[RMDB]
RNA sequence: GGGAACGACUCGAGUAGAGUCGAAAAAUGAGAGGAUCACUUGAGCCCAGGAAGUCAAGGCUGUAAUGAGCUGUGACUACAUUAUGGCACUCCAGCUUGGGGGACAGAGUGAGACCCUGUCUCAAAGGUGUGUAGAAUGGUUCGCCAUUCUACACACAAAAGAAACAACAACAACAAC
Reactivity to 2A3 in 0.01 (KOAc 150mM, MgCl2 10mM, bicine 150mM(pH8.5), 24C), signal-to-noise 4, nucleotides 027 to 126: a000u140g000a050g010a020g030g010a020u010c010a020c040u010u030g040a080g020c000c010c010a010g030g050a050a020g020u110c110a010a020g030g000c000u050g010u030a000a010u020g010a010g030c100u150g160u130g300a150c010u110a110c020a010u010u050a020u040g000g000c020a030c220u020c040c040a060g000c000u020u030g020g000g010g010g020a010c020a040g040a000g000u000g000a010g010a030c020c010c020u040g070u050c000u020c000a030a060a010g200
Reactivity to DMS in 0.01 (KOAc 150mM, MgCl2 10mM, bicine 150mM(pH8.5), 24C), signal-to-noise 4, nucleotides 027 to 126: a130u010g000a050g010a040g000g000a300u000c010a010c020u000u000g020a280g000c020c000c020a020g000g000a080a060g010u000c160a070a090g000g010c000u010g000u000a030a020u010g010a020g000c040u010g020u020g000a100c010u010a110c040a020u000u000a020u000g020g010c020a070c030u000c080c070a090g000c030u000u000g010g000g010g000g000a160c120a240g000a020g020u000g010a050g000a140c080c000c020u010g000u000c000u000c030a050a120a140g020